[RMDB]
RNA sequence: GGGAACGACUCGAGUAGAGUCGAAAAGAAACAGGAUCGACAAGGGUGUAAAGAUCGCUCUUUUACUCGGCAUGAUACCUCCGUUAUCGGGUCAACAGAGUAGUUGCAAAUGACAACAAUGCUCAGGAAGGGGUAGCACCGUUCGCGGUGCUACCAAUCGAGAAUCUAUGUUCGCAUAGAUUCUCGAAAAAGAAACAACAACAACAAC
Reactivity to DMS in 0.01 (KOAc 150mM, MgCl2 10mM, bicine 150mM(pH8.5), 24C), signal-to-noise 3, nucleotides 027 to 156: g010a180a090a110c040a140g010g020a100u000c010g010a090c070a070a100g020g030g000u000g010u000a060a190a150g010a100u000c030g020c050u000c030u000u000u020u010a060c030u000c020g010g020c040a130u020g010a100u000a090c030c010u000c040c020g030u010u010a050u000c080g020g000g020u010c010a060a080c030a060g020a040g010u000a050g030u010u000g010c000a090a090a170u000g020a180c030a020a020c030a040a060u000g000c010u000c010a070g000g000a060a090g000g020g000g020u000a020g010c000a020c020c000g020u000u010c270g050c030g030g030u000g000c010u000a000c010c000a000a030
Reactivity to 2A3 in 0.01 (KOAc 150mM, MgCl2 10mM, bicine 150mM(pH8.5), 24C), signal-to-noise 8, nucleotides 027 to 156: g030a000a150a010c060a060g100g030a070u060c040g040a020c070a070a090g080g070g030u050g040u150a100a110a030g050a050u080c030g020c030u010c000u010u060u020u040a070c040u020c010g010g000c030a040u110g020a020u130a200c000c010u010c010c010g080u070u060a030u090c050g000g010g010u020c010a030a040c060a080g020a000g010u060a020g010u010u010g010c040a070a160a270u210g060a120c000a030a000c010a040a140u100g010c010u020c040a020g100g050a050a060g040g060g000g000u010a000g000c000a000c020c000g010u020u030c120g010c030g060g000u000g000c000u000a000c000c000a000a010

Structure probing data (DMS and 2A3) for a 207-nucleotide construct. The 2A3 profile rests on 8,096 reads. Conditions: 150 mM KOAc, 10 mM MgCl2 and 150 mM bicine (pH 8.5), 24 C. The DMS profile rests on 8,093 reads. In probing experiments dimethyl sulfate is read out at A N1 and C N3, which are open when not base-paired.